[RMDB]
RNA sequence: GGGAACGACUCGAGUAGAGUCGAAAAGGUAAGCUACGGCUUACCAACUAAUGCUUCGGCAUUAGACGUAAGACUUCGGUCUUACGAAGUUCUCAACUACGGUUGAGAACAGUACUGACGUGAGUCAGUACAAGGACCAGCUACGGCUGGUCCACCGUCCGGUGACGGACGGACGCACUGCUACGGCAGUGCGAAUUGUCAUAUCUGGAUCCAACAGUUAAACCAUGUGAUGGUGUAUACUGUGGUAUGGCGUAAAACAUCGGAGUACGCCUUCGUUCGCGAAGGCGAAAAGAAACAACAACAACAAC
Reactivity to 2A3 in 0.01 (KOAc 150mM, MgCl2 10mM, bicine 150mM(pH8.5), 24C), signal-to-noise 9, nucleotides 027 to 266: g000g000u000a000a000g000c000u020a020c300g050g000c000u010u000a000c000c000a000a010c000u000a000a000u000g000c010u040u080c220g110g000c010a000u000u010a030g040a030c020g000u000a000a000g000a000c010u020u130c300g120g000u000c000u000u000a000c000g000a060a020g000u000u000c000u000c000a000a000c010u040a010c290g130g000u000u000g000a000g000a000a000c010a020g000u000a000c000u000g000a000c000g040u040g030a020g000u000c000a000g000u000a000c000a000a150g000g000a000c000c000a000g000c000u020a050c250g150g000c010u000g000g000u000c000c010a010c000c000g000u000c000c000g020g060u100g060a050c010g000g000a000c000g000g000a000c010g000c000a000c000u000g000c000u040a050c270g150g000c000a000g000u000g000c000g000a010a070u110u080g010u000c000a000u010a010u020c050u130g200g100a100u050c030c020a020a010c000a020g000u010u030a050a030a020c020c010a040u110g190u220g300a200u070g080g010u010g010u010a040u030a050c010u010g020u010g040g000u000a000u010g000g000c030g050u120a060a060a080a040c060a070u170c110g030g000a040g050u050a040
Reactivity to DMS in 0.01 (KOAc 150mM, MgCl2 10mM, bicine 150mM(pH8.5), 24C), signal-to-noise 4, nucleotides 027 to 266: g000g000u010a000a000g020c000u000a110c220g040g000c000u000u000a000c010c000a070a140c010u010a010a000u010g000c000u000u020c190g020g000c000a010u000u000a000g000a300c020g000u000a000a000g010a020c000u010u020c170g030g000u000c010u010u000a000c000g020a210a190g010u010u000c010u000c000a010a000c000u000a110c220g040g010u000u010g010a000g000a000a000c010a130g030u000a010c000u000g000a010c000g000u010g010a080g000u000c000a010g010u000a000c000a200a110g010g000a010c010c000a000g010c010u000a120c150g050g020c000u000g000g000u010c000c000a020c010c000g000u000c000c010g000g010u020g000a170c010g010g010a010c000g010g000a240c020g000c000a010c000u010g010c010u010a090c180g030g010c010a010g000u000g000c000g020a030a020u010u010g020u000c010a010u000a010u000c000u020g010g000a090u000c060c060a150a080c000a010g000u000u000a210a270a020c010c000a020u010g020u020g010a030u000g000g000u000g000u000a080u030a010c020u000g010u000g010g010u000a010u000g000g000c000g010u020a060a050a100a080c190a060u010c100g000g010a060g010u000a160

An RNA of 307 nucleotides, treated with 2A3 and DMS and read out base by base. The DMS profile rests on 16,539 reads. For 2A3 the reverse transcriptase was SuperScript II with manganese.